[RMDB]
The record gives the reactivity of an RNA of 177 nucleotides to DMS and 2A3. Source: RMDB library OK2TST, as collected in RNAgym. 2A3 adducts were read by reverse transcription with SuperScript II with manganese. The reactions ran in a buffer of 150 mM KOAc, 10 mM MgCl2 and 150 mM bicine (pH 8.5), at 24 C. DMS adducts were read by reverse transcription with MarathonRT. Values are in units of 0.01, from 0 to 300, in steps of 10.

RNA sequence: GGGAACGACUCGAGUAGAGUCGAAAAUGCACGGUUCAUUAGUAACUUCUUCACUUAUCCGUGAAACUACUGAAAAUGAAUCUGCUAACGCAGGAUACAAAUUCGGUCAAGAAGAAGAAACAUACAAUCUCAGAUAAAUAUUCGUAUUUAUCUGAGAAAAAGAAACAACAACAACAAC
Reactivity to DMS in 0.01 (KOAc 150mM, MgCl2 10mM, bicine 150mM(pH8.5), 24C), signal-to-noise 4, nucleotides 027 to 126: u010g010c000a020c020g000g000u010u010c180a080u000u010a030g010u000a120a160c030u000u000c010u000u010c000a050c020u000u000a060u000c040c020g020u000g000a050a090a090c130u010a010c010u010g000a020a010a020a290u000g000a090a090u010c000u000g010c010u000a130a110c300g000c020a010g000g010a050u010a090c020a000a030a300u000u000c000g020g000u000c250a040a060g010a020a030g010a030a020g000a260a050a040c080a030u020a150c170a050a060
Reactivity to 2A3 in 0.01 (KOAc 150mM, MgCl2 10mM, bicine 150mM(pH8.5), 24C), signal-to-noise 2, nucleotides 027 to 126: u080g020c000a010c010g000g040u120u120c100a070u050u200a030g040u040a190a210c000u020u000c010u020u010c010a010c000u040u040a020u060c010c010g000u020g000a150a100a010c050u070a010c010u000g010a000a030a010a040u020g010a000a010u040c000u000g010c000u040a080a000c080g000c040a000g080g040a030u040a220c000a010a010a020u000u020c000g000g050u060c080a050a000g010a010a000g060a000a010g000a020a070a000c030a010u250a030c020a010a070